An RNA of 177 nucleotides, treated with 2A3 and read out base by base. 2A3 is a SHAPE reagent: it acylates the 2'-hydroxyl of flexible nucleotides of all four kinds. 2A3 adducts were read by reverse transcription with SuperScript II with manganese. For 2A3, 334 sequencing reads were counted. Conditions: 150 mM KOAc, 10 mM MgCl2 and 150 mM bicine (pH 8.5), 24 C.
[RMDB]
RNA sequence: GGGAACGACUCGAGUAGAGUCGAAAAAGUUAUUAUUCUUGCAAUUAUAGCCCUGUAAUGAAGCUGCGUGAUUGGACCUGUGCCCUCUUCUUCCAUUACUUACCCUAUCACUUUUCUUUCUCAAGACGGCGGAUUACUAGUUCGCUAGUAAUCCGCCAAAAGAAACAACAACAACAAC
Reactivity to 2A3 in 0.01 (KOAc 150mM, MgCl2 10mM, bicine 150mM(pH8.5), 24C), signal-to-noise 1, nucleotides 027 to 126: a000g070u030u080a000u110u030a050u140u000c100u200u150g000c010a050a210u050u000a150u180a220g010c020c000c000u020g070u060a060a140u070g010a000a050g000c140u150g030c000g020u050g120a020u000u160g060g000a090c000c020u090g060u200g000c000c000c000u020c000u130u000c000u000u000c000c000a060u000u220a020c000u090u090a130c000c000c000u000a000u050c030a100c090u010u000u060u090c010u070u050u070c100u090c070a060a060g300a010c060